[RMDB]
RNA sequence: GGGAACGACUCGAGUAGAGUCGAAAAGACGCCUGUGUGGCGAAGCGAGUAUGAGAAAGAGCCGCAAAUUAAACAGUCCAUCUAGCGGCAAGAUGGAUUGCUCGCAAAAAGAUCCAUAUCACAGAGACAUAUGGACGUCGUUCGCGACGUCCAUAUGAAAAGAAACAACAACAACAAC
Reactivity to 2A3 in 0.01 (KOAc 150mM, MgCl2 10mM, bicine 150mM(pH8.5), 24C), signal-to-noise 3, nucleotides 027 to 126: g090a000c030g020c010c000u090g060u030g060u140g110g010c030g000a020a000g000c000g010a030g010u030a110u230g100a140g120a210a120a010g180a030g020c000c010g010c050a080a080a010u170u150a040a130a030c040a040g040u010c010c000a000u000c000u040a060g030c000g000g000c000a000a000g000a000u000g000g020a000u000u050g000c000u020c000g000c000a000a100a100a000a080g040a020u050c050c020a030u050a020u190c000a030c010a010g170a010g070a110
Reactivity to DMS in 0.01 (KOAc 150mM, MgCl2 10mM, bicine 150mM(pH8.5), 24C), signal-to-noise 2, nucleotides 027 to 126: g000a190c110g030c050c010u000g040u000g030u040g000g070c060g000a070a070g010c000g000a050g000u000a070u010g000a280g010a030a150a120g030a180g010c000c020g000c050a160a040a090u040u020a100a100a170c130a130g000u000c060c000a020u000c010u030a240g000c000g000g010c000a000a000g030a000u010g010g020a040u000u000g010c040u050c010g000c010a070a160a100a060a040g000a110u020c000c010a160u000a050u010c000a080c070a080g000a150g040a160
Structure probing data (2A3 and DMS) for a 177-nucleotide construct. The RNA was probed in 150 mM KOAc, 10 mM MgCl2 and 150 mM bicine (pH 8.5) at 24 C. DMS adducts were read by reverse transcription with MarathonRT. For 2A3, 1,930 sequencing reads were counted.